[RMDB]
RNA sequence: GGGAACGACUCGAGUAGAGUCGAAAAAAGUGAUUGUCUCAAUUGCUUGGGUUCAAAAGUAGAGAAUCGUCCAAUCCAUCCUGACUGUCGGAUCGGUGCGGAUUAAAUUUAAAGACAGAAACUAAACAUGUAGAUUCAUGAGCGUAAUGCUGGCGGAGUAAUAUAGUACCUUCGGGUACUAUAUUACAAAAGAAACAACAACAACAAC
Reactivity to DMS in 0.01 (KOAc 150mM, MgCl2 10mM, bicine 150mM(pH8.5), 24C), signal-to-noise 4, nucleotides 027 to 156: a050a080g030u000g020a060u010u010g010u000c020u000c030a110a120u010u000g040c020u010u000g010g020g020u000u000c020a050a070a080a080g020u000a130g030a190g000a040a070u000c040g010u000c030c020a080a300u000c000c000a080u000c020c010u000g010a200c070u010g010u000c110g010g000a030u000c080g060g010u000g010c300g020g000a060u000u010a040a040a110u010u000u000a060a060a160g040a060c060a090g010a110a060a150c070u000a030a040a070c040a040u000g000u000a150g010a130u000u010c030a030u010g000a140g050c040g010u000a060a080u010g010c020u010g020g030c020g000g000a290
Reactivity to 2A3 in 0.01 (KOAc 150mM, MgCl2 10mM, bicine 150mM(pH8.5), 24C), signal-to-noise 5, nucleotides 027 to 156: a000a010g070u040g020a060u090u060g080u050c010u020c060a040a060u040u030g000c010u020u010g040g070g040u110u100c090a120a120a060a040g070u140a070g010a010g010a030a050u040c030g010u000c010c000a000a010u000c000c000a000u000c000c010u040g070a070c010u000g010u020c000g000g000a000u000c030g000g000u010g000c000g030g000a000u000u020a000a000a000u090u110u040a010a010a000g010a000c010a010g010a070a030a000c090u100a030a020a040c020a020u080g020u090a050g030a200u120u140c020a010u090g050a020g030c000g060u130a130a060u190g040c050u020g060g030c030g020g020a050